The record gives the reactivity of an RNA of 207 nucleotides to 2A3 and DMS. DMS adducts were read by reverse transcription with MarathonRT. Source: RMDB library OK3TST, as collected in RNAgym. The DMS profile rests on 3,255 reads.

[RMDB]
RNA sequence: GGGAACGACUCGAGUAGAGUCGAAAACGGGGUUGGCUAUAGUUGAUUUCGAACCGUAUGCUUAUGUAUAUGGAAUGAUUUGUACGCUUUACGCAUGUGUACACUCACUCUCAGUUCACUCUUGUGAGAGAAGGGAGAGAGAGAUAUUUUGCGAUUAGGUAUCUUUUAUGUUCGCAUGGGGGAUAUCAAAAGAAACAACAACAACAAC
Reactivity to 2A3 in 0.01 (KOAc 150mM, MgCl2 10mM, bicine 150mM(pH8.5), 24C), signal-to-noise 1, nucleotides 027 to 156: c060g020g020g010g000u050u050g040g000c010u040a030u050a130g030u020u020g020a160u070u060u040c060g030a010a000c010c000g000u000a010u010g010c030u170u110a110u300g010u000a010u000a010u030g010g070a120a060u080g030a060u060u010u050g020u010a030c030g010c030u050u000u120a010c030g000c010a010u040g000u000g010u010a010c020a010c010u010c000a060c010u030c000u010c020a090g040u040u030c010a020c030u020c010u050u150g050u230g020a040g000a030g020a030a040g090g020g000a000g010a010g010a000g000a000g010a010u040a050u130u160u070u040g000c020g040a060u030u070a050
Reactivity to DMS in 0.01 (KOAc 150mM, MgCl2 10mM, bicine 150mM(pH8.5), 24C), signal-to-noise 1, nucleotides 027 to 156: c060g010g040g050g040u000u000g010g020c060u010a110u010a110g020u010u010g010a090u010u000u010c010g000a080a200c020c010g120u010a030u010g010c000u010u000a120u010g040u000a010u000a020u000g030g020a120a140u010g010a130u000u000u020g000u000a070c060g000c010u000u000u010a150c090g020c070a050u010g000u010g020u000a030c020a170c080u000c020a150c020u000c000u000c000a040g010u010u000c030a080c020u000c000u010u010g000u000g000a070g010a040g010a080a100g030g010g000a040g010a070g000a030g010a040g020a120u000a020u000u000u000u000g020c030g010a170u010u010a090